[RMDB]
Chemical mapping of a 177-nucleotide RNA with DMS and 2A3. Source: RMDB library OK1LIB, as collected in RNAgym. DMS adducts were read by reverse transcription with MarathonRT. Conditions: 150 mM KOAc, 10 mM MgCl2 and 150 mM bicine (pH 8.5), 24 C.
RNA sequence: GGGAACGACUCGAGUAGAGUCGAAAACACAACAACAAACACGUAGGCCUCGGAAGAAACCGAGAUCGCAUAGUCAAGCCACAAGUCGAAGAAAACGACGAGUGGCAGCCCGUGAAUGACUAGCAAACAACACCAUGCUCUUCGGAGCAUGGUGUUGAAAAGAAACAACAACAACAAC
Reactivity to DMS in 0.01 (KOAc 150mM, MgCl2 10mM, bicine 150mM(pH8.5), 24C), signal-to-noise 2, nucleotides 027 to 126: c100a080c300a110a020c170a050a010c190a070a040a160c120a120c160g000u020a080g000g000c110c010u000c000g000g000a100a150g020a040a220a050c000c010g000a000g000a010u000c000g010c100a100u030a000g000u040c000a080a060g000c000c050a000c010a040a250g000u010c010g030a050a070g020a040a080a130a030c000g000a020c010g010a300g000u020g000g010c000a000g020c000c000c080g050u000g000a110a090u000g000a040c010u010a010g000c100a070a060a040
Reactivity to 2A3 in 0.01 (KOAc 150mM, MgCl2 10mM, bicine 150mM(pH8.5), 24C), signal-to-noise 3, nucleotides 027 to 126: c070a010c020a060a050c030a020a000c040a070a180a010c080a020c170g210u180a130g010g030c000c000u010c010g000g070a120a130g070a160a160a060c000c030g000a020g010a060u070c060g020c000a010u010a010g010u030c030a010a100g000c010c010a000c000a020a020g000u000c020g100a070a090g090a180a300a030a060c020g000a000c000g010a010g000u000g000g000c000a000g000c000c000c000g040u010g020a070a070u090g010a010c000u040a010g020c030a070a060a040
The DMS profile rests on 1,610 reads.